An RNA of 207 nucleotides, treated with 2A3 and read out base by base. The RNA was probed in 150 mM KOAc, 10 mM MgCl2 and 150 mM bicine (pH 8.5) at 24 C. The 2A3 profile rests on 449 reads. 2A3 adducts were read by reverse transcription with SuperScript II with manganese.
RNA sequence: GGGAACGACUCGAGUAGAGUCGAAAAGAAAAUAUCAGACCUACUUUUACUACGUGUGAACGAUCCUCUCAUCUCUGGACUUCGCCCUUUCCAGAUGGCCACUGGUGCACACUACAAGCUCCGGUGCCUCCUGAGGAUGAUACCCAUUGUUGAGGAAGCCGCAUAUAAUCUUCGGAUUAUAUGCGGCAAAAGAAACAACAACAACAAC
Reactivity to 2A3 in 0.01 (KOAc 150mM, MgCl2 10mM, bicine 150mM(pH8.5), 24C), signal-to-noise 1, nucleotides 027 to 156: g070a020a110a020a030u180a050u130c130a040g050a050c000c050u000a010c000u110u110u180u230a050c060u070a050c000g090u110g000u130g060a110a020c060g020a080u080c010c020u000c040u000c020a080u050c080u090c000u100g000g030a050c020u070u050c030g050c000c000c010u030u060u000c000c000a020g050a090u140g050g000c090c050a000c020u020g000g000u020g030c000a060c020a020c090u240a120c050a170a000g010c020u010c000c000g000g010u000g030c020c010u010c000c000u020g000a000g070g000a000u000g000a030u110a060c070c000c000a060u020u020g020u000u020g050a040g060g080a050a110